[RMDB]
RNA sequence: GGGAACGACUCGAGUAGAGUCGAAAAUAGCUAAAGGAUUUUCUUUUAAAAUUUUACAUACCUUAGCUACGUUUAAUCCUUUACCUCCAGCAGUUGCAUUCUUACUUACUACCCUUUGCACCUCACCGGUCAGUAGCAGGUUCGCCUGCUACUGACCAAAAGAAACAACAACAACAAC
Reactivity to 2A3 in 0.01 (KOAc 150mM, MgCl2 10mM, bicine 150mM(pH8.5), 24C), signal-to-noise 1, nucleotides 027 to 126: u040a000g010c000u080a070a110a190g070g000a080u050u020u100u180c020u040u200u210u110a050a060a060a060u070u120u140u100a060c010a100u250a170c000c000u000u000a000g000c000u000a020c000g010u000u130u060a040a030u080c020c000u020u040u060a100c030c070u080c020c080a010g020c000a060g050u040u080g040c040a040u020u070c000u080u040a090c020u020u060a030c010u010a000c030c000c000u040u050u050g000c010a030c000c000u030c020a060c000c050